[RMDB]
RNA sequence: GGGAACGACUCGAGUAGAGUCGAAAAGAUAUGGAGAGAGACAUGACCUCGUGGUAUCGGAAACGAUACCGGGUCAACAGCUCUUCUCCUAAGUCAAAAGCCCUCCUCCGUUCGCGGAGGAGGGCAAUCCGUUAUUCUAGUUCGCUAGAAUAACGGAAAAAGAAACAACAACAACAAC
Reactivity to DMS in 0.01 (KOAc 150mM, MgCl2 10mM, bicine 150mM(pH8.5), 24C), signal-to-noise 3, nucleotides 027 to 126: g010a040u000a300u000g010g000a020g000a060g010a010g000a040c080a200u000g000a010c000c000u010c280g020u000g020g000u000a000u000c000g010g000a100a110a150c000g010a000u000a000c010c010g000g000g010u000c000a010a060c300a150g000c010u000c000u010u010c010u000c000c000u010a030a080g010u000c070a060a070a120a150g010c000c000c000u000c000c000u000c000c000g000u000u030c200g000c020g030g000a010g010g010a000g000g000g020c000a000a010
Reactivity to 2A3 in 0.01 (KOAc 150mM, MgCl2 10mM, bicine 150mM(pH8.5), 24C), signal-to-noise 2, nucleotides 027 to 126: g000a020u070a030u130g010g000a010g030a000g000a000g010a040c040a150u110g020a010c020c020u160c210g300u100g050g000u010a000u000c020g020g050a080a040a020c010g000a000u000a000c020c000g000g000g000u020c000a020a010c020a040g010c000u000c000u270u080c000u000c000c000u010a090a010g050u000c010a040a060a060a090g000c000c000c000u000c010c020u010c000c000g050u060u070c300g010c030g120g030a000g000g020a000g050g000g000c000a000a000